Record summary: This 177-nucleotide RNA was probed chemically with 2A3 and DMS. The reactions ran in a buffer of 150 mM KOAc, 10 mM MgCl2 and 150 mM bicine (pH 8.5), at 24 C. As a SHAPE reagent, 2A3 marks flexible, mostly unpaired nucleotides at the ribose 2'-OH. It was measured as part of the RMDB library 15KREP.

[RMDB]
RNA sequence: GGGAACGACUCGAGUAGAGUCGAAAAGACGGUGGUUGUCUUAAUGCUUCUGAAGUGGUUGUUAAUAAUUUAGACAAGAGUGCUGGCCAUCCUUUUAAUAAGUUUGGCAAAGCUCGUGUCUAUUAUGACACAUAAUUAAGUUCGCUUAAUUAUGUGUAAAAGAAACAACAACAACAAC
Reactivity to 2A3 in 0.01 (KOAc 150mM, MgCl2 10mM, bicine 150mM(pH8.5), 24C), signal-to-noise 3, nucleotides 027 to 126: g020a000c030g010g060u080g040g030u090u100g030u030c000u030u090a090a080u130g020c020u050u100c040u130g100a130a040g030u040g080g000u050u000g020u050u020a060a020u050a070a050u080u100u030a000g000a000c000a020a030g010a020g030u050g020c090u060g090g000c010c000a000u020c000c000u030u080u020u030a130a100u230a090a000g010u000u000u000g010g020c000a070a060a030g010c000u000c000g020u010g000u000c000u010a020u030u020a040u040g020
Reactivity to DMS in 0.01 (KOAc 150mM, MgCl2 10mM, bicine 150mM(pH8.5), 24C), signal-to-noise 6, nucleotides 027 to 126: g010a080c090g010g020u000g000g010u010u010g010u000c040u010u000a080a110u010g010c060u000u000c060u000g010a090a140g020u000g000g020u000u000g000u000u000a060a060u000a040a060u000u010u000a010g020a020c000a080a030g010a020g010u010g010c240u000g010g000c000c000a010u000c040c000u000u000u010u010a100a130u010a020a020g000u000u000u000g000g020c000a030a050a210g000c000u000c010g000u000g010u000c000u000a010u000u010a030u000g010

For 2A3, 3,653 sequencing reads were counted.